[RMDB]
RNA sequence: GGGAACGACUCGAGUAGAGUCGAAAAGAUUAAGUGGGAGCGUCGCCCUUUCGGUGCAUCGGAUAUUAAUUAGCCAGUGCGUGGCAAUACGCAUAUUGAUGUCUACUUUGGCGUAGACUCUGCCAAUUUAAGGAUUGAUGGGCAAUCCAGCCCUAGAAUAGUAUACCAGUUUCGACUGGUAUACUAUAAAAGAAACAACAACAACAAC
Reactivity to DMS in 0.01 (KOAc 150mM, MgCl2 10mM, bicine 150mM(pH8.5), 24C), signal-to-noise 5, nucleotides 027 to 156: g000a150u000u000a040a070g010u010g020g020g010a080g020c080g010u000c050g000c010c000c040u000u010u000c050g020g040u010g030c010a060u010c030g010g010a080u010a070u000u000a050a130u000u000a100g010c010c030a140g020u000g000c020g040u010g020g030c100a080a110u000a030c020g020c030a050u000a070u000u000g010a090u000g010u000c030u010a040c020u000u000u010g010g020c120g010u000a090g010a050c030u000c040u010g010c010c030a030a070u000u000u000a080a080g010g010a110u000u010g010a170u000g010g010g020c030a080a100u000c100c050a160g000c000c000c000u000a080g000a090
Reactivity to 2A3 in 0.01 (KOAc 150mM, MgCl2 10mM, bicine 150mM(pH8.5), 24C), signal-to-noise 6, nucleotides 027 to 156: g050a040u160u190a080a050g020u080g030g020g000a050g000c010g020u020c010g030c010c010c030u040u070u060c060g030g000u030g000c010a020u040c030g050g000a030u040a050u170u130a190a060u110u110a050g020c020c010a020g020u010g030c020g010u010g020g040c070a030a040u130a040c010g000c020a010u020a090u060u110g040a050u080g020u020c020u030a040c030u090u090u140g080g010c060g000u020a060g020a030c010u000c010u040g040c000c020a070a070u040u120u110a110a060g020g010a050u040u060g060a050u110g010g000g030c000a010a020u050c070c010a020g000c000c000c000u010a020g040a050

Record summary:
Conditions: 150 mM KOAc, 10 mM MgCl2 and 150 mM bicine (pH 8.5), 24 C. This 207-nucleotide RNA was probed chemically with DMS and 2A3. For 2A3 the reverse transcriptase was SuperScript II with manganese.